[RMDB]
RNA sequence: GGGAACGACUCGAGUAGAGUCGAAAAAUGGUCCGACGGCGGUCGGCGGGUAGACAUCACGCCGGUUCGGUACCUGAAGGUGUCGAACGGUCCGCUCACUCGGCGGUAUCUGCUCGGCGAGAACGGGUGGAGAGUUUAUAUUCGUAUAAACUCUCCAAAAAGAAACAACAACAACAAC
Reactivity to 2A3 in 0.01 (KOAc 150mM, MgCl2 10mM, bicine 150mM(pH8.5), 24C), signal-to-noise 2, nucleotides 027 to 126: a010u090g040g010u030c000c010g020a040c020g050g100c040g010g060u050c010g010g050c030g010g010g000u040a050g030a100c050a110u080c050a070c160g020c010c000g050g000u010u010c010g000g000u010a010c000c000u060g130a250a080g000g010u020g010u010c010g010a010a000c010g010g020u010c010c020g000c020u040c020a160c040u060c010g010g000c010g000g010u050a090u020c010u000g030c000u000c020g050g000c030g020a030g020a090a030c030g000g010g040
Reactivity to DMS in 0.01 (KOAc 150mM, MgCl2 10mM, bicine 150mM(pH8.5), 24C), signal-to-noise 8, nucleotides 027 to 126: a090u010g020g010u000c010c010g010a060c080g010g010c060g010g010u000c020g010g020c020g010g010g010u000a050g010a080c110a080u010c170a130c240g010c010c010g020g010u010u000c010g010g010u000a020c000c000u000g020a110a130g020g010u000g000u000c000g000a010a030c020g000g000u000c020c010g000c020u000c110a140c160u010c120g010g010c010g000g010u000a050u000c010u000g010c030u000c020g000g000c020g000a090g000a130a080c050g000g010g010

An RNA of 177 nucleotides, treated with 2A3 and DMS and read out base by base. Conditions: 150 mM KOAc, 10 mM MgCl2 and 150 mM bicine (pH 8.5), 24 C. For DMS, 15,993 sequencing reads were counted. The data come from the RNA Mapping Database (RMDB), library OK2TRN. 2A3 adducts were read by reverse transcription with SuperScript II with manganese.